[RMDB]
RNA sequence: GGGAACGACUCGAGUAGAGUCGAAAAUCCACUAUGAAUCUAGUCACUAAACAAACACAAUUAGCUACUGUGUGUAAUAGUGAGUGUUGAUAACACAAAAUAAUAGUAUAGUUUUGGAAGAUUAUACGCGCCCUUGCUCCGUUCGCGGAGCAAGGAAGCAGAGGAACAUGUUCGCAUGUUCCUCUGCAAAAGAAACAACAACAACAAC
Reactivity to 2A3 in 0.01 (KOAc 150mM, MgCl2 10mM, bicine 150mM(pH8.5), 24C), signal-to-noise 4, nucleotides 027 to 156: u020c030c000a060c110u220a170u240g120a090a060u070c090u140a070g160u040c010a010c000u030a080a090a010c010a020a090a020c000a000c010a030a100u160u120a090g050c060u200a100c070u000g000u010g000u000g000u020a070a010u000a020g030u000g030a050g010u030g020u040u040g080a140u220a280a010c020a000c010a020a070a080a090u280a090a110u080a100g020u000a010u010a030g010u010u010u170u080g110g040a090a050g010a070u060u020a020u020a020c050g030c030g050c050c000c000u000u000g000c000u000c000c000g010u040u030c090g000c010g110g000a000g000c000a000a000g000g000a000a000
Reactivity to DMS in 0.01 (KOAc 150mM, MgCl2 10mM, bicine 150mM(pH8.5), 24C), signal-to-noise 1, nucleotides 027 to 156: u000c000c000a080c190u050a150u020g040a090a110u000c070u000a200g010u000c020a040c000u030a010a060a180c000a170a250a000c000a020c030a010a080u000u000a220g000c090u000a080c010u000g070u010g000u000g000u000a060a280u000a000g000u000g010a170g020u000g000u000u020g000a060u000a170a200c020a110c060a060a090a070a060u010a050a300u000a030g030u000a020u000a020g010u000u000u040u000g050g000a160a150g000a050u000u020a020u000a010c000g000c140g000c100c000c000u000u000g030c000u000c000c000g040u000u000c300g070c100g100g020a010g010c000a000a000g010g000a000a040
The record gives the reactivity of an RNA of 207 nucleotides to 2A3 and DMS. Values cover nucleotides 27 to 156. DMS (dimethyl sulfate) methylates the pairing face of unpaired adenines and cytosines. The DMS profile rests on 1,716 reads.